[RMDB]
RNA sequence: GGGAACGACUCGAGUAGAGUCGAAAACUCGCAAACGACUACGAGUACGCAUUAGCCGCUUAGUCGGCUAACGUUCUUUCUGAUUUUUCCUGUCGGAUCAGAGGGGGCGUAAUUUCAGGCAGGAUAGUCCUAACCUUUUCCUGUGGGGAACAGGGCGGUCCUCCGCCAUGUUCGCAUGGCGGAGGACAAAAGAAACAACAACAACAAC
Reactivity to 2A3 in 0.01 (KOAc 150mM, MgCl2 10mM, bicine 150mM(pH8.5), 24C), signal-to-noise 4, nucleotides 027 to 156: c020u010c000g030c070a170a110a130c100g140a100c080u160a050c060g020a000g030u060a060c090g020c070a090u010u000a000g000c000c010g020c090u190u180a070g110u300c000g010g000c010u000a000a000c000g010u000u000c000u010u030u000c000u000g000a000u000u000u000u000u000c000c000u010g000u010c000g000g000a000u010c000a000g000a000g010g010g010g000g010c010g020u030a000a020u090u170u190c070a000g000g000c000a000g000g000a010u030a000g000u010c010c000u030a050a070c030c000u050u060u160u200c040c050u110g030u160g050g030g020g000a000a050c040a060g010g010g000c040g010
The record gives the reactivity of an RNA of 207 nucleotides to 2A3. The reactions ran in a buffer of 150 mM KOAc, 10 mM MgCl2 and 150 mM bicine (pH 8.5), at 24 C. Reactivities are given for positions 27 through 156.